[RMDB]
Description:
Chemical mapping of a 177-nucleotide RNA with DMS and 2A3. For DMS the reverse transcriptase was MarathonRT. Reactivities are rounded to 0.1 and cut off at 0 and 3.
RNA sequence: GGGAACGACUCGAGUAGAGUCGAAAAGAAAAAUGAUGAUGUCAGUUGGCCGGUCGGCCGAUCGCUCGGUCUGUCAGUCAGUCGGUCGGUCGAUCGGUCGGUCGGUCAGUCGGCUUCCUGUCUUCAAGAAUCAGCUUCUAUUCGUAGAAGCUGAUUCAAAAGAAACAACAACAACAAC
Reactivity to DMS in 0.01 (KOAc 150mM, MgCl2 10mM, bicine 150mM(pH8.5), 24C), signal-to-noise 3, nucleotides 027 to 126: g010a040a090a070a110a080u040g000a060u010g020a050u000g000u000c020a120g020u010u010g000g020c000c020g000g020u000c000g010g000c010c000g010a000u000c010g000c040u000c010g020g030u010c020u010g000u000c020a130g000u050c250a120g000u010c030g000g000u000c010g010g000u000c000g020a020u000c010g000g030u000c000g020g000u010c000g020g000u010c000a010g010u010c070g010g010c040u000u000c030c040u000g000u000c030u010u020c080a080a280
Reactivity to 2A3 in 0.01 (KOAc 150mM, MgCl2 10mM, bicine 150mM(pH8.5), 24C), signal-to-noise 3, nucleotides 027 to 126: g110a030a070a020a000a030u180g070a020u080g020a020u170g060u070c040a050g020u050u020g000g020c000c000g040g010u000c000g000g000c000c010g000a010u000c000g000c040u010c010g060g030u040c080u180g100u060c070a100g070u040c060a060g050u080c040g000g000u000c000g000g000u010c000g000a000u000c000g000g010u000c000g000g000u000c000g020g010u000c000a010g010u020c020g010g000c000u020u010c020c000u040g050u060c020u020u060c050a100a070
For 2A3 the reverse transcriptase was SuperScript II with manganese. For 2A3, 1,933 sequencing reads were counted. Conditions: 150 mM KOAc, 10 mM MgCl2 and 150 mM bicine (pH 8.5), 24 C.